[RMDB]
RNA sequence: GGGAACGACUCGAGUAGAGUCGAAAACGCUAAGACAUUUGCUGAAGCCUUGAAGAGCAGUAGUCAUCCUUACUGCUAGUUCAACUUAUUGUUGAGCAACAUUGCCAAAUUGCGGGAAAGUCUUAAUGACUUCGCUACCAAGUUCAAUAGCGUACUCGAGGAACAAAACGUUCGCGUUUUGUUCCUCAAAAGAAACAACAACAACAAC
Reactivity to 2A3 in 0.01 (KOAc 150mM, MgCl2 10mM, bicine 150mM(pH8.5), 24C), signal-to-noise 4, nucleotides 027 to 156: c010g010c000u000a030a020g070a030c030a120u070u050u120g000c040u060g080a060a010g020c000c040u040u050g060a150a040g030a020g120c020a000g000u010a000g060u090c090a120u150c070c010u060u070a020c010u010g010c000u020a030g010u020u000c000a010a010c020u150u190a130u190u300g010u000u000g010a000g020c000a010a030c000a040u000u070g000c000c000a030a120a160u090u110g000c050g000g060g040a120a080a010g010u000c020u070u170a210a080u110g000a010c000u020u000c070g000c010u020a060c040c020a050a020g020u030u060c060a080a090u030a040g010c000g020u010a060c030u060c070
Chemical mapping of a 207-nucleotide RNA with 2A3. Reactivities are rounded to 0.1 and cut off at 0 and 3. For 2A3, 1,825 sequencing reads were counted. Values cover nucleotides 27 to 156. For 2A3 the reverse transcriptase was SuperScript II with manganese. The reactions ran in a buffer of 150 mM KOAc, 10 mM MgCl2 and 150 mM bicine (pH 8.5), at 24 C.